[RMDB]
RNA sequence: GGGAACGACUCGAGUAGAGUCGAAAAGCUGGAGGACUAAGAAGGCUGAGUCUGGUGAAGCAAGACUCUGCUGAUACAAUCCUCCUAGAGAACAGGGUGGGCGAGAGCAGCCCUCACUGGAGGACACUUGGAUGAUGGUCUUCGGACCAUCAUCCAAAAAAGAAACAACAACAACAAC
Reactivity to 2A3 in 0.01 (KOAc 150mM, MgCl2 10mM, bicine 150mM(pH8.5), 24C), signal-to-noise 1, nucleotides 027 to 126: g100c110u030g000g000a010g000g000a000c000u020a120a170g070a130a070g040g000c080u050g000a000g000u000c000u050g030g000u090g300a070a050g110c050a070a000g000a000c000u000c020u020g040c020u000g000a100u050a180c080a000a000u000c000c000u000c000c000u050a040g050a000g000a140a000c040a000g000g000g060u020g000g000g030c000g070a070g070a030g140c040a000g000c000c000c000u000c030a000c000u000g070g000a000g130g070a040c030a000c110
Reactivity to DMS in 0.01 (KOAc 150mM, MgCl2 10mM, bicine 150mM(pH8.5), 24C), signal-to-noise 2, nucleotides 027 to 126: g020c070u030g000g000a000g010g000a060c120u000a300a190g060a140a160g010g000c060u000g000a000g000u000c000u000g000g030u020g090a140a240g020c240a060a030g000a060c000u000c000u000g000c000u000g000a170u060a070c210a120a140u000c000c000u000c000c040u000a010g000a120g000a040a010c020a000g010g000g030u000g000g000g020c020g050a150g000a070g030c080a220g000c020c000c040u080c000a000c020u000g000g000a010g000g030a190c180a040c130